[RMDB]
RNA sequence: GGGAACGACUCGAGUAGAGUCGAAAAGUGUCGUCCAAGGGUCCAGGCAUCUUCCUGCAAGGACUGGCUGUGCAUGGGAAGGACGGAGCGCUCUUACCCGGAGAGGAUUUGCCGGGAUCUAUCGUGCGAAGUUAGCAACGUUCGCGUUGCUAACUUCAAAAGAAACAACAACAACAAC
Reactivity to DMS in 0.01 (KOAc 150mM, MgCl2 10mM, bicine 150mM(pH8.5), 24C), signal-to-noise 1, nucleotides 027 to 126: g000u010g010u010c010g020u000c030c020a100a110g030g010g040u000c020c010a080g000g010c050a030u000c140u000u000c020c030u010g040c130a200a080g000g010a070c080u000g010g000c030u000g020u000g030c010a050u000g010g000g010a100a140g000g000a120c040g000g000a060g030c030g010c030u000c020u020u000a140c000c000c000g020g030a070g020a050g010g000a090u000u000u000g020c010c000g010g030g000a030u010c100u000a070u020c100g020u000g010c200
Reactivity to 2A3 in 0.01 (KOAc 150mM, MgCl2 10mM, bicine 150mM(pH8.5), 24C), signal-to-noise 1, nucleotides 027 to 126: g090u060g030u020c030g070u000c000c030a020a100g260g000g030u000c050c010a040g000g000c020a070u050c040u120u100c000c000u030g040c050a070a090g130g020a110c040u020g070g000c060u020g020u020g040c010a070u140g020g010g040a080a000g000g020a020c020g020g020a030g030c050g010c010u000c000u150u070a130c000c000c030g030g030a100g040a040g060g080a110u070u080u250g010c000c000g010g020g000a010u080c010u040a090u090c070g090u060g000c030
Overview:
An RNA of 177 nucleotides, treated with DMS and 2A3 and read out base by base. 2A3 adducts were read by reverse transcription with SuperScript II with manganese. It was measured as part of the RMDB library OK2TRN. Values cover nucleotides 27 to 126. For DMS, 1,414 sequencing reads were counted. The RNA was probed in 150 mM KOAc, 10 mM MgCl2 and 150 mM bicine (pH 8.5) at 24 C. For DMS the reverse transcriptase was MarathonRT.